[RMDB]
RNA sequence: GGGAACGACUCGAGUAGAGUCGAAAAGAAGAAUUCGUUCUUCCACAACCUUUGUGGAUAGGGAGCUGGUAGAGGAGGAUCGUCCCAUUGGGACGAUCUCCCCACCCUCAAACAGCGAAGAACUAUCCACUCUGGUCUUCUCUAUUUUCGAAUAGAGCCUUAUUGUGACAUUCGUGUCACAAUAAGGAAAAGAAACAACAACAACAAC
Reactivity to 2A3 in 0.01 (KOAc 150mM, MgCl2 10mM, bicine 150mM(pH8.5), 24C), signal-to-noise 4, nucleotides 027 to 156: g040a010a000g010a010a050u130u160c200g050u100u010c030u060u000c030c030a100c040a070a040c000c000u020u000u000g000u010g010g000a000u000a000g000g000g030a020g000c000u010g030g040u120a030g010a000g010g020a010g010g000a000u000c000g010u040c020c000c070a230u190u300g000g000g000a000c000g000a000u000c020u020c000c000c000c010a040c010c010c010u000c000a300a300a030c000a010g010c010g100a150a010g000a020a000c000u000a000u000c000c000a000c000u000c000u000g000g030u000c050u180u050c000u000c000u010a030u020u030u080u120c170g090a020a020u060a020g020a020g000
Reactivity to DMS in 0.01 (KOAc 150mM, MgCl2 10mM, bicine 150mM(pH8.5), 24C), signal-to-noise 1, nucleotides 027 to 156: g010a090a020g000a000a060u060u010c190g000u000u000c000u000u000c010c020a090c100a120a120c010c000u010u030u020g010u000g010g030a020u010a020g000g000g000a300g040c030u000g000g010u000a260g000a100g010g010a120g000g000a020u010c000g040u030c000c030c020a300u000u050g060g050g040a030c020g020a000u010c030u000c010c010c000c030a140c190c030c100u010c000a030a090a190c000a030g010c050g010a110a100g020a130a130c000u010a020u000c000c010a030c000u000c010u010g000g000u000c000u000u000c010u000c030u000a060u000u000u000u010c090g000a090a090u000a090g010a100g040
An RNA of 207 nucleotides, treated with 2A3 and DMS and read out base by base. DMS adducts were read by reverse transcription with MarathonRT. It was measured as part of the RMDB library RNAMAK. For 2A3 the reverse transcriptase was SuperScript II with manganese. Values cover nucleotides 27 to 156. The reactions ran in a buffer of 150 mM KOAc, 10 mM MgCl2 and 150 mM bicine (pH 8.5), at 24 C.